Structure probing data (2A3 and DMS) for a 177-nucleotide construct. For 2A3 the reverse transcriptase was SuperScript II with manganese. The reactions ran in a buffer of 150 mM KOAc, 10 mM MgCl2 and 150 mM bicine (pH 8.5), at 24 C. The data come from the RNA Mapping Database (RMDB), libraries RFM100 and RFMREP.
[RMDB]
RNA sequence: GGGAACGACUCGAGUAGAGUCGAAAAUCACUUUAAAGGCUAAUUGGCUAAGGGUUCAAGGGCUUGCGGACCAAAACUGGUAUCAUUGCAAGGUUCGAAACUUAAUAAAUACCCUAGCGCUUAAAGACGAUGUCUUUGAGUUCGCUCAAAGACAUCGAAAAGAAACAACAACAACAAC
Reactivity to 2A3 in 0.01 (KOAc 150mM, MgCl2 10mM, bicine 150mM(pH8.5), 24C), signal-to-noise 5, nucleotides 027 to 126: u050c000a030c000u020u030u060a100a130a010g090g000c080u100a140a130u200u120g070g000c020u020a150a300g000g010g020u060u070c130a050a080g020g010g010c020u000u000g010c030g010g020a000c000c000a060a040a120a110c110u040g000g050u120a050u300c040a120u060u260g040c000a000a070g080g010u060u030c020g060a040a040a040c050u080u060a090a020u140a130a200a020u150a030c010c000c000u000a000g010c080g030c050u020u060a010a050a000g030a010
Reactivity to DMS in 0.01 (KOAc 150mM, MgCl2 10mM, bicine 150mM(pH8.5), 24C), signal-to-noise 3, nucleotides 027 to 126: u030c020a140c030u030u010u020a040a020a100g000g000c020u000a120a100u040u010g010g010c070u010a140a080g010g020g000u000u010c170a090a240g000g000g000c010u000u000g030c000g030g000a010c000c000a040a100a140a070c220u010g010g010u000a060u010c070a080u040u020g000c050a010a050g030g010u000u000c010g020a130a030a040c080u030u000a060a050u010a080a090a090u060a050c060c010c110u000a030g000c030g010c080u010u000a000a030a010g000a300